RNA sequence: GGGAACGACUCGAGUAGAGUCGAAAAGGCGGAGCACGUAUGGCUGGGAUCAAUGCGAUUGGUGAUCUGGGUCAUAGCAUUGAAUCGAUGUUGGAAUCAGUCAUGGCUGAUUACAUUAUGCUCAAUCCAGUACGUACCAUUUCGAUGGUACGUACUGAAAAGAAACAACAACAACAAC
Reactivity to 2A3 in 0.01 (KOAc 150mM, MgCl2 10mM, bicine 150mM(pH8.5), 24C), signal-to-noise 9, nucleotides 027 to 126: g080g010c070g040g000a020g000c030a020c100g060u070a070u070g030g000c030u050g060g040g020a000u020c020a040a040u080g050c040g140a110u070u180g060g020u060g040a100u060c060u110g120g010g020u040c020a020u040a030g000c030a030u020u090g070a100a070u090c080g030a070u070g050u090u080g050g060a010a020u010c010a010g040u030c050a120u160g140g000c020u000g000a010u030u050a020c020a040u070u150a060u170g010c020u010c030a020a030u020c030
Reactivity to DMS in 0.01 (KOAc 150mM, MgCl2 10mM, bicine 150mM(pH8.5), 24C), signal-to-noise 5, nucleotides 027 to 126: g000g010c160g000g010a020g010c030a050c110g010u010a050u010g010g020c000u010g000g020g010a050u010c030a040a020u000g010c150g000a150u030u000g010g010u010g000a050u020c060u020g000g010g000u010c040a040u010a050g000c010a030u020u010g010a100a050u020c050g010a090u020g000u000u020g010g010a020a040u000c000a010g000u000c040a100u010g020g000c010u000g000a020u000u000a040c080a070u030u010a080u030g020c050u010c030a110a120u020c120